[RMDB]
Source: RMDB library OK2TRN, as collected in RNAgym.
An RNA of 177 nucleotides, treated with DMS and 2A3 and read out base by base.
High 2A3 reactivity points to a flexible backbone, as in loops and unpaired stretches.
The reactions ran in a buffer of 150 mM KOAc, 10 mM MgCl2 and 150 mM bicine (pH 8.5), at 24 C.
The DMS profile rests on 679 reads.
2A3 adducts were read by reverse transcription with SuperScript II with manganese.
RNA sequence: GGGAACGACUCGAGUAGAGUCGAAAAUUCACACACCAAGUGACGAUCUCAUCAAAGGAUCAGGCAGUUGAAGAGGGAAGAACUGUGGGAGUAGAAGUGCGGGUGUCGGGAGAAUUAUACGACAAUCGGCGUAUAUGGGAUUCGUCCCAUAUACGCCAAAAGAAACAACAACAACAAC
Reactivity to DMS in 0.01 (KOAc 150mM, MgCl2 10mM, bicine 150mM(pH8.5), 24C), signal-to-noise 1, nucleotides 027 to 126: u010u000c100a050c030a150c090a100c070c090a080a070g000u000g000a020c130g010a120u000c010u000c020a080u000c200a070a150a170g000g060a030u000c020a090g010g020c050a030g040u000u010g000a100a100g030a040g000g000g020a100a090g000a070a070c070u010g010u020g040g000g030a020g010u000a100g000a010a030g000u010g000c090g020g010g000u000g000u000c080g040g000g040a040g010a080a030u020u010a040u010a150c080g010a110c140a030a060u030c080
Reactivity to 2A3 in 0.01 (KOAc 150mM, MgCl2 10mM, bicine 150mM(pH8.5), 24C), signal-to-noise 1, nucleotides 027 to 126: u110u000c010a000c000a000c000a010c010c060a050a020g030u060g100a030c060g020a030u020c050u020c000a170u030c070a250a110a020g100g000a020u020c020a020g040g000c000a010g020u060u070g030a070a020g040a040g050g000g070a040a070g030a120a000c060u040g000u040g070g000g000a040g030u150a030g010a130a010g030u060g040c070g010g050g000u100g040u100c000g070g030g010a090g000a020a000u190u080a080u080a200c080g000a020c060a020a070u080c070

The 2A3 profile rests on 668 reads.